RNA sequence: GGGAACGACUCGAGUAGAGUCGAAAACGCUGGGUUUGUCGUCGCAGGCAACAGCUUCUGAAGCGCGCACGGAAGACAUGUAUUGGCGACCGGAAACCUGUGCUGAAGCGCGCACGGCAACCGAAAGGUGCGAAACCUCCAGUUUCGACUGGAGGAAGGUGGAUGGAAGGUUCGCCUUCCAUCCACCAAAAGAAACAACAACAACAAC
Reactivity to 2A3 in 0.01 (KOAc 150mM, MgCl2 10mM, bicine 150mM(pH8.5), 24C), signal-to-noise 1, nucleotides 027 to 156: c000g030c040u100g080g000g050u000u000u070g300u200c000g010u000c000g000c070a050g240g030c100a260a170c070a150g020c000u000u000c000u010g060a190a030g060c000g000c020g050c030a000c010g020g050a010a010g120a090c130a290u160g050u150a270u210u300g110g000c000g000a020c040c030g140g000a000a000a000c060c010u060g010u060g180c040u110g050a060a010g030c000g040c010g000c000a000c000g010g000c000a000a020c000c000g000a010a070a090g000g010u010g000c000g050a080a020a140c000c010u000c000c000a000g070u030u100u170c300g130a060c010u010g000g000a000g040g000a000a000
Overview
Chemical mapping of a 207-nucleotide RNA with 2A3. The RNA was probed in 150 mM KOAc, 10 mM MgCl2 and 150 mM bicine (pH 8.5) at 24 C.